[RMDB]
RNA sequence: GGGAACGACUCGAGUAGAGUCGAAAAAGCACGGUUUUUGAGGACGCAUUUUGUCCGUGCGGUAAUGCCCACCUUUACACUUUCUCGCAUGGUGCGGGAGUGUGGAGAGGAAACAAAAGCUAGUCUCGAUAGGCGGUUAACUUCGGUUAACCGCCAACGUACAAUAGUACUUCGGUACUAUUGUACGAAAAGAAACAACAACAACAAC
Reactivity to DMS in 0.01 (KOAc 150mM, MgCl2 10mM, bicine 150mM(pH8.5), 24C), signal-to-noise 2, nucleotides 027 to 156: a120g030c000a020c020g010g010u000u000u000u000u000g010a080g020g000a040c020g060c060a150u000u000u000u000g010u010c000c000g010u000g010c020g000g010u010a080a100u000g000c010c000c010a190c070c000u000u000u000a060c010a010c010u000u000u010c010u000c000g000c050a300u000g060g020u000g030c000g020g000g000a020g010u000g020u000g050g010a030g010a130g000g000a130a040a010c030a020a040a050a040g030c070u010a140g010u000c000u010c130g020a160u010a120g020g030c010g030g000u000u000a020a010c010u000u010c290g050g000u010u000a000a010c000c000g030c000c000a000a010
Reactivity to 2A3 in 0.01 (KOAc 150mM, MgCl2 10mM, bicine 150mM(pH8.5), 24C), signal-to-noise 8, nucleotides 027 to 156: a000g000c000a000c000g000g010u010u000u000u000u000g070a090g000g020a020c050g040c140a170u010u000u000u000g000u000c000c000g000u000g000c000g010g040u130a070a040u140g050c000c000c000a060c010c000u000u010u030a010c000a000c010u060u150u030c020u020c010g040c030a120u300g250g060u300g140c000g000g000g000a000g000u010g000u010g000g000a040g000a000g020g100a030a050a000c000a000a000a000a000g070c040u080a040g020u000c010u000c040g070a140u150a140g000g000c000g000g000u000u000a000a000c010u030u050c240g060g000u000u000a000a000c010c000g000c000c000a000a000
An RNA of 207 nucleotides, treated with DMS and 2A3 and read out base by base. Reactivities are rounded to 0.1 and cut off at 0 and 3. In probing experiments dimethyl sulfate is read out at A N1 and C N3, which are open when not base-paired. 2A3 adducts were read by reverse transcription with SuperScript II with manganese.